Source: RMDB library RFM100, as collected in RNAgym.
This 177-nucleotide RNA was probed chemically with 2A3 and DMS.
Conditions: 150 mM KOAc, 10 mM MgCl2 and 150 mM bicine (pH 8.5), 24 C.
The DMS profile rests on 3,233 reads.
For DMS the reverse transcriptase was MarathonRT.
2A3 adducts were read by reverse transcription with SuperScript II with manganese.
Values cover nucleotides 27 to 126.
RNA sequence: GGGAACGACUCGAGUAGAGUCGAAAAGCGCGCCAAGCCCGCUUGCGAUAACGCUAUCACUGCGUUGGCCCGGUCCCUUCGGCUUCGGAUUCCUCAGCCCCCAGCCCCCCGAAGCAGUCGGGAUCGGCACUCAGCUGGAUUUCGAUCCAGCUGAGUGAAAAGAAACAACAACAACAAC
Reactivity to 2A3 in 0.01 (KOAc 150mM, MgCl2 10mM, bicine 150mM(pH8.5), 24C), signal-to-noise 3, nucleotides 027 to 126: g000c010g000c010g010c040c020a050a050g040c000c000c000g060c040u070u130g040c060g130a130u110a160a040c040g010c030u030a030u300c070a040c180u080g000c030g020u020u030g040g010c000c000c000g000g000u010c000c000c000u010u000c000g030g000c010u010u000c010g030g020a090u040u050c030c020u100c080a070g020c000c010c000c000c000a010g020c030c000c000c020c000c000g000a000a000g000c010a010g010u000c000g010g000g000a000u010c000g000g000
Reactivity to DMS in 0.01 (KOAc 150mM, MgCl2 10mM, bicine 150mM(pH8.5), 24C), signal-to-noise 2, nucleotides 027 to 126: g000c030g010c070g000c010c040a030a040g010c010c020c020g020c040u020u000g000c080g000a110u050a060a060c010g040c000u000a050u030c160a140c110u000g000c060g040u000u000g000g000c060c000c000g020g020u020c010c000c010u010u000c000g010g000c010u010u010c000g000g000a240u020u000c000c000u000c070a120g020c030c000c010c030c030a040g020c010c000c020c080c010c000g000a000a020g000c040a000g020u000c140g000g000g030a020u000c000g000g040